[RMDB]
RNA sequence: GGGAACGACUCGAGUAGAGUCGAAAAAAAUUACCCAGCAGUUGGAUAAGAGUAUCUAUUAUGUUAUGGCAGUACAGCAGUAUGCCACCUACAUGUCAUCUCUUGUAAAUCAGCUUAAUGAGCUGUCCCAAGCUGUGUAUAAGACACAAGAUAUGUACACUUCCCUUAUUUUCGAAUAAGGGAAGUGAAAAGAAACAACAACAACAAC
Reactivity to 2A3 in 0.01 (KOAc 150mM, MgCl2 10mM, bicine 150mM(pH8.5), 24C), signal-to-noise 3, nucleotides 027 to 156: a000a000a000u100u040a060c020c000c010a000g020c020a010g020u030u020g010g000a020u030a080a020g030a000g040u100a060u100c080u050a130u270u080a060u170g020u080u010a010u040g020g000c050a050g140u050a030c040a120g160c040a030g110u020a030u020g010c000c000a040c040c020u030a020c010a010u030g020u050c030a080u030c000u000c000u020u050g030u080a010a050a090u110c010a000g000c000u050u070a100a020u250g030a030g020c000u010g010u020c020c000c010a060a020g020c020u000g020u000g010u000a060u040a160a050g130a000c020a010c050a160a070g100a120u170a000u230g040u070a020
Reactivity to DMS in 0.01 (KOAc 150mM, MgCl2 10mM, bicine 150mM(pH8.5), 24C), signal-to-noise 2, nucleotides 027 to 156: a070a120a100u000u000a070c000c000c000a070g030c070a110g020u000u000g000g020a180u010a010a090g010a140g000u010a060u000c070u000a150u000u000a060u000g030u000u020a040u000g030g020c030a050g020u000a100c030a140g040c070a180g000u020a040u000g000c010c010a030c040c050u040a050c000a010u010g000u000c040a130u000c030u000c000u030u000g040u000a030a070a080u000c020a060g030c000u000u000a090a110u010g020a070g030c030u000g000u010c020c010c010a070a160g010c010u000g030u000g060u000a050u000a020a090g000a090c050a100c050a040a100g000a090u000a030u000g010u000a160
The record gives the reactivity of an RNA of 207 nucleotides to 2A3 and DMS. For DMS, 3,032 sequencing reads were counted. For 2A3 the reverse transcriptase was SuperScript II with manganese. The RNA was probed in 150 mM KOAc, 10 mM MgCl2 and 150 mM bicine (pH 8.5) at 24 C. Source: RMDB library OK3TST, as collected in RNAgym.